[RMDB]
RNA sequence: GGGAACGACUCGAGUAGAGUCGAAAAAGGGACAACAUCUCUUCGCGACGCAUUAUGCGGCUCACGCUCGUGAUUCCAUGCGCCUGCAUGGCUUCGUCGAUCUGGGCACCGAUCGUCAUGCGCGGAUCGGACUCCAUAGGUUCGCCUAUGGAGUCCGAAAAGAAACAACAACAACAAC
Reactivity to 2A3 in 0.01 (KOAc 150mM, MgCl2 10mM, bicine 150mM(pH8.5), 24C), signal-to-noise 4, nucleotides 027 to 126: a000g090g000g000a030c080a170a060c040a260u030c030u000c000u070u080c050g030c050g080a160c010g000c030a060u070u060a040u300g080c120g030g000c000u030c020a010c140g010c010u010c010g040u050g030a030u020u010c000c000a010u020g000c050g160c050c160u110g020c000a010u000g000g000c010u010u020c010g130u010c000g000a030u010c020u070g000g030g000c010a070c060c070g070a090u110c020g020u000c010a040u100g000c020g010c010g030g020a040u020
An RNA of 177 nucleotides, treated with 2A3 and read out base by base. Values cover nucleotides 27 to 126. For 2A3 the reverse transcriptase was SuperScript II with manganese. The reactions ran in a buffer of 150 mM KOAc, 10 mM MgCl2 and 150 mM bicine (pH 8.5), at 24 C. The data come from the RNA Mapping Database (RMDB), library OK1LIB.